Structure probing data (2A3 and DMS) for a 177-nucleotide construct. The RNA was probed in 150 mM KOAc, 10 mM MgCl2 and 150 mM bicine (pH 8.5) at 24 C. For DMS, 1,850 sequencing reads were counted.
RNA sequence: GGGAACGACUCGAGUAGAGUCGAAAAUAAUCAAGAUGAAUCGUUUUUAGUUUGCUUGCUUACCUUAAGGGCCAGGAUGAGAUCUACUUGAAUCUUUUUAUGUAGGCAGACAGCGACGGAAUUUAAACGAUCGUGGUAAUUUCGAUUACCACGAUCGAAAAGAAACAACAACAACAAC
Reactivity to 2A3 in 0.01 (KOAc 150mM, MgCl2 10mM, bicine 150mM(pH8.5), 24C), signal-to-noise 3, nucleotides 027 to 126: u220a000a050u110c070a030a050g050a040u160g030a010a110u060c010g050u000u000u080u080u000a050g000u000u010u030g010c010u050u020g000c010u050u070a090c010c000u030u090a060a050g050g000g000c010c040a030g030g010a050u050g010a020g000a090u000c000u020a050c050u130u060g040a070a030u000c000u030u040u000u000u000a120u120g000u000a020g020g000c000a000g040a060c050a010g020c010g010a010c010g040g080a070a100u140u150u060a150a010a000
Reactivity to DMS in 0.01 (KOAc 150mM, MgCl2 10mM, bicine 150mM(pH8.5), 24C), signal-to-noise 2, nucleotides 027 to 126: u000a100a050u040c160a120a120g010a060u060g000a200a100u040c010g000u000u000u010u040u020a060g010u030u000u000g000c040u020u020g040c000u010u000a110c050c040u000u030a080a030g000g000g030c200c090a020g010g040a090u010g040a020g040a080u000c060u050a040c160u000u000g000a110a250u000c000u000u010u060u000u020a020u040g000u000a010g010g030c010a020g010a020c080a060g000c170g000a020c170g040g000a090a040u010u000u000a070a100a200

2A3 adducts were read by reverse transcription with SuperScript II with manganese.
Source: RMDB library OK1LIB, as collected in RNAgym.